[RMDB]
RNA sequence: GGGAACGACUCGAGUAGAGUCGAAAAAGAAGUACGUUACGUGGCUUAUGAUGCGGGUGGCUCAGCCAUGACUGCCCUGCUCUCUGGCGAAACUCAAGUCCUUUCAACAGGUCUGGGCGAAGUGCUAUGACUACGUGGAGUUCGCUCCACGUAGUCAAAAAGAAACAACAACAACAAC
Reactivity to DMS in 0.01 (KOAc 150mM, MgCl2 10mM, bicine 150mM(pH8.5), 24C), signal-to-noise 2, nucleotides 027 to 126: a060g010a080a080g000u000a050c080g000u000u000a110c080g040u000g000g000c110u000u000a080u040g000a070u000g030c010g040g000g010u000g000g000c120u000c030a060g010c120c110a070u000g000a040c030u000g000c020c020c040u000g030c120u000c050u000c080u000g020g020c110g000a120a050a070c100u040c100a030a070g010u000c080c050u010u000u000c230a050a210c140a010g040g000u000c000u030g000g000g000c080g020a030a030g010u000g000c040u010a140